[RMDB]
RNA sequence: GGGAACGACUCGAGUAGAGUCGAAAACUAUGACUCCCAGGACCUCAAGUAUGGUGAGGACAGAGUGUCAUGUGAGGCUGUGUCAGAUCAGUCUGUGUCCUGGGACCACCAGAGCAUGUGCCAGUGGCCGUGCCGAAUCAUUCGUGAUUCGGCACGGAAAAGAAACAACAACAACAAC
Reactivity to DMS in 0.01 (KOAc 150mM, MgCl2 10mM, bicine 150mM(pH8.5), 24C), signal-to-noise 1, nucleotides 027 to 126: c050u000a050u010g000a060c220u020c010c040c020a040g000g020a010c010c100u000c210a090a080g000u010a070u050g000g000u000g020a140g000g000a000c030a000g020a000g030u000g000u000c000a160u000g000u040g010a000g000g030c000u000g040u010g010u000c010a050g000a060u000c020a030g000u000c050u000g000u000g020u000c000c000u020g000g000g070a040c110c050a100c090c100a040g020a160g000c100a020u000g010u020g010c000c000a160g030u000g020g000
Reactivity to 2A3 in 0.01 (KOAc 150mM, MgCl2 10mM, bicine 150mM(pH8.5), 24C), signal-to-noise 3, nucleotides 027 to 126: c010u060a080u290g080a070c010u010c030c000c000a000g010g000a030c040c130u120c090a060a080g040u070a110u110g060g040u080g050a110g000g090a000c010a010g140a010g000u140g020u060c010a050u300g190u190g110a000g040g000c000u020g000u000g050u250c000a010g080a150u000c000a010g050u000c030u030g050u000g000u000c000c010u020g000g000g010a000c000c000a020c030c000a030g040a030g030c040a080u190g030u140g020c010c000a020g040u020g030g000